[RMDB]
Source information:
Chemical mapping of a 207-nucleotide RNA with 2A3. The 2A3 profile rests on 575 reads. The reactions ran in a buffer of 150 mM KOAc, 10 mM MgCl2 and 150 mM bicine (pH 8.5), at 24 C. For 2A3 the reverse transcriptase was SuperScript II with manganese.
RNA sequence: GGGAACGACUCGAGUAGAGUCGAAAAAUUCAAGCCGUGAUAGUCGUUCCUCGUGCUUAGUAACUAAGGAUGAAAUGCAUGUCUAAGACAGCAUCUUCGCGUAACUCUCUCAGCGCACAAUUGCGCCGAGCCGCGAACACAAGAAUUGAGGUUGAAGACCAGUAAAUCACUUCGGUGAUUUACUGGUAAAAGAAACAACAACAACAAC
Reactivity to 2A3 in 0.01 (KOAc 150mM, MgCl2 10mM, bicine 150mM(pH8.5), 24C), signal-to-noise 2, nucleotides 027 to 156: a000u110u050c050a000a050g050c000c000g110u110g050a260u160a120g000u000c000g030u010u020c010c000u000c050g010u020g000c000u030u000a000g050u090a150a180c130u020a000a070g080g000a030u050g080a190a200a000u110g010c040a140u060g070u010c030u070a150a000g010a080c000a020g060c030a050u020c030u000u010c000g000c000g000u050a090a050c000u000c030u030c000u050c190a030g000c040g060c050a030c010a090a300u250u120g040c010g000c000c010g030a010g000c010c000g000c000g010a050a000c020a000c010a010a050g130a100a050u070u240g000a040g000g100u050u010g040a090a000g090